The record gives the reactivity of an RNA of 207 nucleotides to 2A3. Source: RMDB library OK3TST, as collected in RNAgym. For 2A3, 482 sequencing reads were counted. The RNA was probed in 150 mM KOAc, 10 mM MgCl2 and 150 mM bicine (pH 8.5) at 24 C.
[RMDB]
RNA sequence: GGGAACGACUCGAGUAGAGUCGAAAAAUAUAGGGCUGCUAACAAUAAGUAUUGGUUCGAUAGCGUGAUCGUCUGCGUGAUAUUGGACACCAGCGAAUCGACGGUGCUACCACCGACCGUCGGACGACGCUCACCGCGACUCGAAUGCGUCGACCUCCUUCUGUGACGGAUUCGUCCGUCACAGAAGAAAAGAAACAACAACAACAAC
Reactivity to 2A3 in 0.01 (KOAc 150mM, MgCl2 10mM, bicine 150mM(pH8.5), 24C), signal-to-noise 1, nucleotides 027 to 156: a000u240a000u060a050g000g030g000c020u000g040c000u050a060a020c020a170a090u280a290a050g130u080a080u200u150g090g000u090u060c040g000a050u040a010g000c010g000u010g010a050u030c010g070u080c050u010g020c070g000u050g070a110u060a130u200u200g050g110a040c010a010c130c040a000g020c010g030a030a130u090c000g000a000c000g000g000u100g030c070u110a130c020c050a050c030c000g000a010c000c060g000u020c000g020g050a010c040g000a000c000g000c070u040c010a010c060c100g020c010g050a000c040u000c000g050a030a060u100g010c050g000u050c020g000a080c000c000u000c000